[RMDB]
RNA sequence: GGGAACGACUCGAGUAGAGUCGAAAACAUGUGUGCAUCUGAGGUAGGGACAGGCAUGCAUCUUACAGGAUGAAUAUCGAGCAGAGUUACAGAGAGGGGGAAACUCCUUGAGGUUUCAGGAAUCACCUAAUCCACUGUGACUCACAAAUUCCUGCCAGUACGUGAGUGAUUUCGAUCACUCACGUACAAAAGAAACAACAACAACAAC
Reactivity to 2A3 in 0.01 (KOAc 150mM, MgCl2 10mM, bicine 150mM(pH8.5), 24C), signal-to-noise 4, nucleotides 027 to 156: c070a010u040g010u000g000u010g030c030a120u070c100u030g030a050g050g040u080a030g050g020g080a030c020a020g010g030c010a010u020g010c000a010u020c050u110u180a090c090a060g130g000a070u110g110a120a140u300a080u300c080g040a010g070c090a040g030a010g010u000u000a010c010a000g050a020g020a040g010g020g020g010g010a030a050a030c010u000c000c000u050u080g050a060g070g130u070u140u130c050a010g020g070a070a130u110c080a120c010c010u050a100a080u000c010c010a080c030u000g000u000g000a000c000u000c020a030c030a030a060a020u090u010c000c000u000g010c000c010a020